[RMDB]
Record summary
An RNA of 207 nucleotides, treated with DMS and 2A3 and read out base by base. Values cover nucleotides 27 to 156. 2A3 is a SHAPE reagent: it acylates the 2'-hydroxyl of flexible nucleotides of all four kinds. DMS adducts were read by reverse transcription with MarathonRT. 2A3 adducts were read by reverse transcription with SuperScript II with manganese. Source: RMDB library M2RFPK, as collected in RNAgym.

RNA sequence: GGGAACGACUCGAGUAGAGUCGAAAACGCAGAGGGUUCUGAUAACAAAGAACCUAGAUAGCCGCAUCGGUAUUAUAGGAUGUAAUCGGUGAGCCGGAAUGCCUGCAUCGUAAGCCUAUAAGUAAAUUUAAGUGUAAUCACUUCGGUGAUUACACAAGAACCUAAAUUACUUCGGUAAUUUAGGUUCAAAAGAAACAACAACAACAAC
Reactivity to DMS in 0.01 (KOAc 150mM, MgCl2 10mM, bicine 150mM(pH8.5), 24C), signal-to-noise 2, nucleotides 027 to 156: c110g030c030a140g000a250g000g030g000u000u000c010u030g060a230u010a140a190c300a180a250a080g000a030a020c000c010u010a050g030a170u010a140g040c060c060g030c050a090u000c010g000g010u000a070u000u010a030u000a010g030g020a080u000g030u000a120a100u000c000g020g050u000g000a110g000c010c040g020g020a200a130u000g010c040c050u000g000c030a020u000c000g050u000a070a140g010c000c010u000a060u000a010a070g010u000a050a030a180u000u010u000a080a190g010u010g030u000a010a030u000c000a000c000u000u010c290g030g000u000g000a030u000u000a030c000a000c010a050a070
Reactivity to 2A3 in 0.01 (KOAc 150mM, MgCl2 10mM, bicine 150mM(pH8.5), 24C), signal-to-noise 2, nucleotides 027 to 156: c060g050c030a030g040a090g080g000g000u000u000c000u020g030a090u080a220a030c020a040a080a000g010a000a000c000c000u000a010g020a090u100a000g050c050c040g050c090a130u080c090g080g000u100a020u140u000a020u090a030g090g000a070u070g080u170a060a080u090c020g000g010u010g010a030g060c050c020g080g060a090a030u120g030c010c000u060g040c020a040u010c000g060u030a050a040g000c000c010u020a030u010a110a050g080u090a030a110a230u150u220u070a160a050g000u000g000u000a000a000u000c010a000c010u020u020c070g040g000u010g000a000u000u000a000c000a000c000a000a000